[RMDB]
RNA sequence: GGGAACGACUCGAGUAGAGUCGAAAACUCAUCUUCGCCAUCUUCAUCCUCAUCCUCAGGCAGCACGGAACAACAAUUUGUGGAGGUUUUCGAUGUUCCUAAAGCUCCAACAAGCAGCAGUGAACAACUGAUCCCUAUGAUUCGUCAUAGGGAUCAGAAAAGAAACAACAACAACAAC
Reactivity to 2A3 in 0.01 (KOAc 150mM, MgCl2 10mM, bicine 150mM(pH8.5), 24C), signal-to-noise 2, nucleotides 027 to 126: c000u000c030a100u050c040u160u080c030g010c000c000a050u030c040u090u030c040a130u020c000c000u020c010a050u030c010c020u050c020a020g030g080c020a020g010c040a010c050g000g080a090a030c020a000a000c010a040a200u070u050u090g070u050g030g000a070g060g000u010u030u000u060c030g040a070u110g050u000u010c000c000u050a070a040a040g020c010u000c040c050a040a050c020a000a080g050c020a000g010c000a000g050u020g200a050a020c010a020a040
Reactivity to DMS in 0.01 (KOAc 150mM, MgCl2 10mM, bicine 150mM(pH8.5), 24C), signal-to-noise 3, nucleotides 027 to 126: c030u010c000a130u010c020u000u010c050g000c020c030a060u000c040u000u000c040a090u010c030c010u000c040a060u000c020c030u010c030a080g010g010c060a080g020c050a050c070g010g010a050a050c070a050a070c080a090a110u000u010u010g030u010g010g020a090g010g000u000u000u000u000c050g000a110u000g010u000u000c000c010u000a030a210a140g010c020u010c030c020a080a060c100a090a100g020c070a040g010c110a030g000u010g010a060a090c130a060a170

An RNA of 177 nucleotides, treated with 2A3 and DMS and read out base by base. DMS adducts were read by reverse transcription with MarathonRT.